[RMDB]
RNA sequence: GGGAACGACUCGAGUAGAGUCGAAAAGACGGUGCGCCGGUCGACGGCGCUGCUGGGCGGCACCGGUGCAGUAGUGCAAGAAGGUGGGCCUCAGGUGGUCGACGGGGUGAUGUGGUUCUGACCGGCGGCCAUGACUAUUGUUCGCAAUAGUCAUGGCAAAAGAAACAACAACAACAAC
Reactivity to DMS in 0.01 (KOAc 150mM, MgCl2 10mM, bicine 150mM(pH8.5), 24C), signal-to-noise 2, nucleotides 027 to 126: g000a110c110g010g020u000g010c030g030c000c000g010g020u000c030g010a120c030g010g000c020g030c030u000g000c120u000g020g000g010c050g020g010c020a010c000c000g000g000u000g030c010a040g000u010a100g020u000g010c000a070a050g010a110a100g010g050u000g000g010g000c010c030u000c060a080g020g020u000g010g010u000c020g010a050c040g020g010g010g030u000g010a080u000g000u000g010g010u000u000c040u010g000a050c000c030g020g000c070g010
Reactivity to 2A3 in 0.01 (KOAc 150mM, MgCl2 10mM, bicine 150mM(pH8.5), 24C), signal-to-noise 1, nucleotides 027 to 126: g130a010c050g070g010u090g010c080g000c030c000g040g030u030c040g010a070c000g030g100c010g000c070u030g040c040u050g020g000g040c000g040g160c020a020c010c040g020g000u040g040c010a020g050u300a020g070u030g000c050a070a010g120a070a100g150g000u050g010g030g070c010c000u010c040a030g060g080u100g070g000u190c050g000a040c010g000g040g000g000u240g030a120u030g060u070g160g000u060u040c030u060g040a040c000c000g020g010c030g030